Source: RMDB library RFM100, as collected in RNAgym.
An RNA of 177 nucleotides, treated with DMS and read out base by base.
DMS adducts were read by reverse transcription with MarathonRT.
The DMS profile rests on 1,355 reads.
Values cover nucleotides 27 to 126.
Conditions: 150 mM KOAc, 10 mM MgCl2 and 150 mM bicine (pH 8.5), 24 C.
[RMDB]
RNA sequence: GGGAACGACUCGAGUAGAGUCGAAAAAGCUUCUGUGUUACCACGUUGGAGAGAGUGUUGAUUUGGACUCCCUGAUAGGGCUUAGGCAUCUUUCAGCCCUUGCUUCGGGUUUUCGUCCUUAUUGGCCACGCACGGAACUGUUCGCAGUUCCGUGCGUAAAAGAAACAACAACAACAAC
Reactivity to DMS in 0.01 (KOAc 150mM, MgCl2 10mM, bicine 150mM(pH8.5), 24C), signal-to-noise 1, nucleotides 027 to 126: a160g020c090u000u000c020u070g000u020g000u030u010a070c080c100a090c110g040u040u000g000g010a100g090a120g010a070g050u000g010u000u000g000a010u000u000u000g000g000a010c070u000c130c000c010u010g000a030u020a020g040g000g010c020u000u020a090g000g070c090a080u050c110u010u010u000c140a040g070c020c000c000u030u000g000c180u010u000c190g000g060g000u010u000u010u060c090g000u010c000c000u020u050a100u000u000g010g000c070c090